[RMDB]
RNA sequence: GGGAACGACUCGAGUAGAGUCGAAAAGAAAGAUUAUUUUCAAAUGUAUGGAACUAACUUUUGAAACCUUUUUCACUCAUGUCUUGUAACAUUAGGAGUAGCAGUUAUUAGUGAGGCUUCUAAUGACUAAAGGGCAAGUUUAGCACCACAUGAUAUCUAUCCCACUGCAAUUCGUUGCAGUGGGAUAAAAAGAAACAACAACAACAAC
Reactivity to 2A3 in 0.01 (KOAc 150mM, MgCl2 10mM, bicine 150mM(pH8.5), 24C), signal-to-noise 1, nucleotides 027 to 156: g030a080a050a000g000a060u210u060a150u050u220u030u030c030a090a160a060u120g050u070a040u070g080g040a020a020c000u000a000a000c000u000u030u030u000g040a150a110a160c010c010u080u020u000u130u220c030a040c000u050c040a130u120g000u020c040u080u100g050u070a100a000c000a000u000u090a040g000g000a010g010u000a000g160c030a030g010u140u160a030u140u100a050g000u040g040a040g050g080c030u010u010c000u030a000a000u000g000a030c030u030a070a100a030g000g000g050c000a000a070g040u020u070u130a070g200c190a000c000c140a010c000a000u120g180a030u210a000u300c060